[RMDB]
RNA sequence: GGGAACGACUCGAGUAGAGUCGAAAACAGAAGAGCAGUGGUAUAGUGCGAAGGUACACUGAGGGACUAGGCUGACGGUCAUAGUGCGACUGUAAACAAAGCAUGUUGUGCACCCCACACCUCCCUGCUGGACGUGGGUUCAAUUCCCACCAUCUCCGAUGUAUGAUGGGUUCGCCCAUCAUACAUCAAAAGAAACAACAACAACAAC
Reactivity to 2A3 in 0.01 (KOAc 150mM, MgCl2 10mM, bicine 150mM(pH8.5), 24C), signal-to-noise 4, nucleotides 027 to 156: c020a030g110a120a010g020a010g040c050a020g000u090g120g060u080a030u150a140g030u050g050c070g070a140a050g050g030u030a010c030a000c050u070g050a090g030g050g020a050c020u040a040g080g000c030u080g050a050c050g030g000u050c060a080u100a110g070u070g090c030g020a010c040u060g030u110a120a080a070c060a020a130a090g030c050a040u150g050u040u030g010u080g000c020a040c000c000c000c000a030c000a000c020c010u030c010c000c000u010g020c040u040g020g030a050c070g010u000g010g020g020u050u070c010a020a030u060u020c020c000c000a010c030c000a070u040c050u020c020c050
Reactivity to DMS in 0.01 (KOAc 150mM, MgCl2 10mM, bicine 150mM(pH8.5), 24C), signal-to-noise 2, nucleotides 027 to 156: c050a110g010a150a160g010a110g040c050a060g000u000g010g000u000a080u000a050g040u010g030c050g010a150a070g000g040u010a010c000a050c000u030g000a060g050g030g020a260c020u010a080g040g030c000u000g000a070c040g030g010u000c000a110u000a170g040u020g040c080g010a050c030u010g010u000a040a020a080c080a030a050a080g010c020a060u000g000u000u010g000u000g000c040a080c010c030c000c040a050c020a060c020c070u010c010c000c020u000g010c030u020g000g010a210c090g010u010g000g010g030u000u000c120a050a300u000u000c000c000c000a040c050c050a150u000c010u000c040c300